[RMDB]
Annotation: The record gives the reactivity of an RNA of 177 nucleotides to DMS and 2A3. Values cover nucleotides 27 to 126. Conditions: 150 mM KOAc, 10 mM MgCl2 and 150 mM bicine (pH 8.5), 24 C. The data come from the RNA Mapping Database (RMDB), library TTRDES.
RNA sequence: GGGAACGACUCGAGUAGAGUCGAAAAGAUAUGGACUCCGGUGGCGAGCUGGUAUCGGAAACGAUACUCAGCGAUGAGCCACUCGUGGGAGUCCUAAGUCAAAGCUUGAUGGUUCGCCAUCAAGCAACACAAGAGGAAGCUUCGGCUUCCUCUUGUGAAAAGAAACAACAACAACAAC
Reactivity to DMS in 0.01 (KOAc 150mM, MgCl2 10mM, bicine 150mM(pH8.5), 24C), signal-to-noise 2, nucleotides 027 to 126: g000a040u010a160u000g000g000a010c000u000c000c010g060g010u000g020g050c000g010a130g000c010u010g010g000u000a000u000c010g010g010a040a010a150c010g000a000u010a000c000u000c010a010g020c000g020a140u010g000a280g020c010c010a000c000u000c110g010u000g010g000g030a020g000u000c000c020u000a000a090g000u010c050a190a090a120g020c000u020u000g010a030u000g000g000u000u030c300g000c000c000a010u000c000a040a000g000c010a070a110
Reactivity to 2A3 in 0.01 (KOAc 150mM, MgCl2 10mM, bicine 150mM(pH8.5), 24C), signal-to-noise 1, nucleotides 027 to 126: g000a000u030a010u190g000g000a000c000u000c000c010g020g000u000g000g060c190g080a070g070c020u000g010g030u000a000u050c010g030g000a040a020a020c020g000a000u010a010c140u160c300a000g000c000g030a200u140g070a020g000c000c000a030c000u060c030g190u300g130g070g000a000g000u000c000c000u000a020a000g000u070c080a240a000a040g010c000u010u000g020a010u000g000g120u080u150c250g010c080c000a010u000c010a000a010g000c000a010a000